[RMDB]
RNA sequence: GGGAACGACUCGAGUAGAGUCGAAAACAAAAGGAGGUCCAGGACAUGAGGAACCUGUUCCUGUGCAGACAUAUGGGUGGAAUUUGGUUACAAUGCGUUCAAACGUGGAUGUAUUUUACAUGUCCACAUGACAUCAGUAGUUCGCUACUGAUGUCAUAAAAGAAACAACAACAACAAC
Reactivity to DMS in 0.01 (KOAc 150mM, MgCl2 10mM, bicine 150mM(pH8.5), 24C), signal-to-noise 7, nucleotides 027 to 126: c090a070a060a100a100g010g000a070g010g000u000c040c050a090g010g000a070c050a060u000g010a130g000g010a060a060c060c050u000g010u000u000c010c000u000g020u010g010c070a060g010a080c140a080u000a070u010g010g010g010u000g000g010a060a050u000u010u000g020g010u000u010a100c110a050a050u000g010c070g010u000u000c080a040a060a120c260g010u000g000g000a030u000g020u000a060u000u000u010u000a090c100a010u000g000u000c000c000a040c070
Reactivity to 2A3 in 0.01 (KOAc 150mM, MgCl2 10mM, bicine 150mM(pH8.5), 24C), signal-to-noise 6, nucleotides 027 to 126: c040a010a080a020a020g110g030a040g030g010u020c040c010a020g020g020a020c020a060u120g040a080g080g060a030a030c000c020u030g030u020u040c000c000u040g060u120g020c040a020g060a150c030a070u170a080u200g090g040g000u050g020g060a040a040u110u140u110g020g000u030u020a040c040a050a040u050g010c030g010u030u070c050a120a150a130c130g050u040g000g010a020u010g030u050a090u030u180u050u080a080c090a030u040g010u010c010c000a010c020

Chemical mapping of a 177-nucleotide RNA with DMS and 2A3.
Values cover nucleotides 27 to 126.
For DMS the reverse transcriptase was MarathonRT.
The DMS profile rests on 9,865 reads.
2A3 adducts were read by reverse transcription with SuperScript II with manganese.